The data come from the RNA Mapping Database (RMDB), library OK3TST.
An RNA of 207 nucleotides, treated with 2A3 and read out base by base.
Reactivities are given for positions 27 through 156.
The RNA was probed in 150 mM KOAc, 10 mM MgCl2 and 150 mM bicine (pH 8.5) at 24 C.

[RMDB]
RNA sequence: GGGAACGACUCGAGUAGAGUCGAAAAGUGUAUAGGCAAGCCGACCCUCCGCCUAUACACGAAUUAAGGAGGGUGGAGAUCUUAUGCUCGCGAUCUUACGUCACGAGCGAGGGCCUGCGGCUCGUGACGAAUCUUACGCAGGCCAUAGCGAGCUACAGGCCUAAAUUAGUUUCGACUAAUUUAGGCCAAAAGAAACAACAACAACAAC
Reactivity to 2A3 in 0.01 (KOAc 150mM, MgCl2 10mM, bicine 150mM(pH8.5), 24C), signal-to-noise 1, nucleotides 027 to 156: g000u000g020u000a000u000a000g000g020c070a130a040g100c000c070g150a130c000c000c000u000c020c020g000c010c000u010a020u000a000c010a000c000g000a010a010u110u110a080a090g000g000a030g000g010g040u010g000g020a060g000a050u070c030u090u130a040u150g000c000u020c020g010c030g000a070u040c030u080u240a070c030g000u000c000a000c000g000a000g000c040g010a020g000g000g000c000c010u050g020c000g020g000c000u010c000g000u000g010a000c000g000a040a050u010c010u100u130a040c060g010c000a000g000g000c000c000a000u020a000g020c030g000a000g030c000u040a050c060a090